Overview:
Chemical mapping of a 177-nucleotide RNA with DMS. Values cover nucleotides 27 to 126. It was measured as part of the RMDB library RFMREP. For DMS, 552 sequencing reads were counted. For DMS the reverse transcriptase was MarathonRT.
RNA sequence: GGGAACGACUCGAGUAGAGUCGAAAAGAAGGGCGUCGUGAACACAGUUAAGUGGCUCGUCUGUAGCUCCCGGAGGUGAGUACACCUCUACGUAUAUGGGGCGAUGAGGGGUCAAGAAGACUGGCAUCACUAAUGACUCCUUCGGGAGUCAUUAGUGAAAAGAAACAACAACAACAAC
Reactivity to DMS in 0.01 (KOAc 150mM, MgCl2 10mM, bicine 150mM(pH8.5), 24C), signal-to-noise 1, nucleotides 027 to 126: g020a190a060g000g000g020c070g000u000c020g000u010g010a110a070c010a100c060a050g000u020u000a070a290g040u010g000g000c000u000c000g030u040c040u000g000u020a300g000c000u000c000c000c040g020g000a000g020g000u010g000a230g040u040a240c050a000c010c000u230c020u000a010c280g000u000a160u000a050u000g000g000g010g000c060g010a100u000g000a010g010g000g020g000u000c010a030a050g010a070a250g020a020c100u000g000g000c170a130u020